[RMDB]
RNA sequence: GGGAACGACUCGAGUAGAGUCGAAAAAGACGGAAACCCAUCGACUGUCACCAGAUGCUGCAUCACCUGAUCACUGAUCGCUCAACGGUAUCCGGCGGUACAACUGAAUACUUGUAGCUGCCUUUUGAAAAGGAGUUCAUCUUCGGAUGAACUCCAAGUUAUUAUAGAGGUUCGCCUCUAUAAUAACAAAAGAAACAACAACAACAAC
Reactivity to 2A3 in 0.01 (KOAc 150mM, MgCl2 10mM, bicine 150mM(pH8.5), 24C), signal-to-noise 7, nucleotides 027 to 156: a000g040a010c040g040g030a070a060a040c020c020c010a040u080c040g080a080c040u050g020u070c020a020c040c010a020g030a120u090g020c050u010g000c020a030u030c010a030c020c010u040g030a050u040c030a020c120u050g020a040u040c030g010c030u050c050a050a080c060g050g010u050a090u070c050c060g010g010c000g020g010u030a020c000a020a020c060u130g090a140a070u120a170c030u020u040g020u050a040g090c010u010g020c010c000u100u110u060u130g100a100a080a030a050g010g000a000g000u000u000c000a000u000c000u030u060c160g090g000a000u000g000a000a000c000u000c000c000a000a000
Reactivity to DMS in 0.01 (KOAc 150mM, MgCl2 10mM, bicine 150mM(pH8.5), 24C), signal-to-noise 3, nucleotides 027 to 156: a070g000a110c010g000g020a060a090a140c050c020c010a110u010c030g020a110c040u000g000u000c020a060c040c040a110g010a070u010g020c060u020g030c050a110u000c020a070c040c010u000g010a080u000c040a110c070u000g000a090u000c040g030c100u000c040a090a080c050g020g000u010a040u000c010c040g010g040c010g030g050u000a070c100a070a070c040u000g020a080a070u000a040c030u000u000g030u000a070g010c020u010g000c010c120u000u010u000u000g000a060a070a170a160g010g000a020g010u000u000c000a000u000c000u000u020c300g070g000a040u000g000a010a010c000u010c000c020a010a030

This 207-nucleotide RNA was probed chemically with 2A3 and DMS. Reactivities are given for positions 27 through 156. The RNA was probed in 150 mM KOAc, 10 mM MgCl2 and 150 mM bicine (pH 8.5) at 24 C. DMS adducts were read by reverse transcription with MarathonRT.